[RMDB]
RNA sequence: GGGAACGACUCGAGUAGAGUCGAAAAGGGGUCCUUUCUCUAGCGUGUGCCGGUAAUACUAUAUGGAGGACUGAAGCCUCCACGGUCCGAUGAAAUAUAGUGCCAGGCAUCGGGAAGGACGGAGGCACCCAAAGGUAGAGUGUUCGCACUCUACCAAUGGCUAAGUGUAGUUCGCUACACUUAGCCAAAAAGAAACAACAACAACAAC
Reactivity to 2A3 in 0.01 (KOAc 150mM, MgCl2 10mM, bicine 150mM(pH8.5), 24C), signal-to-noise 1, nucleotides 027 to 156: g040g000g010g020u010c050c010u010u070u000c050u000c090u100a000g070c080g140u250g030u060g100c000c000g160g000u160a130a060u140a120c000u000a000u000a000u040g050g010a030g010g000a000c000u000g010a000a000g010c000c000u000c020c000a000c050g000g000u000c000c010g190a280u000g010a000a000a000u010a000u000a000g020u030g160c150c160a090g020g000c000a000u030c020g000g020g000a020a020g000g000a010c030g000g000a000g000g000c000a040c000c000c030a080a080a010g000g000u000a000g000a000g000u000g020u120u080c300g110c050a000c000u000c000u010a000c020c050a060a020
The data come from the RNA Mapping Database (RMDB), library RNAMAK.
Chemical mapping of a 207-nucleotide RNA with 2A3.
The RNA was probed in 150 mM KOAc, 10 mM MgCl2 and 150 mM bicine (pH 8.5) at 24 C.
The 2A3 profile rests on 955 reads.